[RMDB]
RNA sequence: GGGAACGACUCGAGUAGAGUCGAAAAGGCACUUUCAUCAAAACUGGCAAACGGUGAGAGCAGUUUACCGUCGGCAGGCAAACGCCCACCUGCCGCAACUUCAAUCACAUCGCCAGGCCGCAGGCUGGCCUCCUACUCGGUUCGCCGAGUAGGAGGCAAAAGAAACAACAACAACAAC
Reactivity to DMS in 0.01 (KOAc 150mM, MgCl2 10mM, bicine 150mM(pH8.5), 24C), signal-to-noise 2, nucleotides 027 to 126: g000g000c020a060c040u020u000u000c090a060u050c100a040a060a090a260c020u000g010g010c070a030a010a050c180g000g000u000g020a020g010a300g010c040a050g020u010u000u000a090c230c120g020u000c000g010g060c000a020g000g010c120a030a150a090c160g020c010c010c080a100c030c000u010g010c050c000g000c080a010a040c020u000u000c060a030a220u000c080a000c030a060u000c240g000c020c000a030g000g010c030c020g000c090a110g010g000c070u000g000
Reactivity to 2A3 in 0.01 (KOAc 150mM, MgCl2 10mM, bicine 150mM(pH8.5), 24C), signal-to-noise 1, nucleotides 027 to 126: g040g010c030a040c030u100u190u060c030a190u030c000a080a140a000a070c050u050g030g000c050a130a090a100c200g070g000u000g020a050g060a010g040c050a050g020u100u070u130a140c090c050g100u150c000g040g000c000a000g010g000c090a200a090a000c110g040c010c000c010a000c000c020u020g000c000c010g020c000a000a000c000u100u090c030a000a050u030c000a000c000a140u000c070g000c010c000a010g000g000c020c060g100c040a000g060g030c010u120g080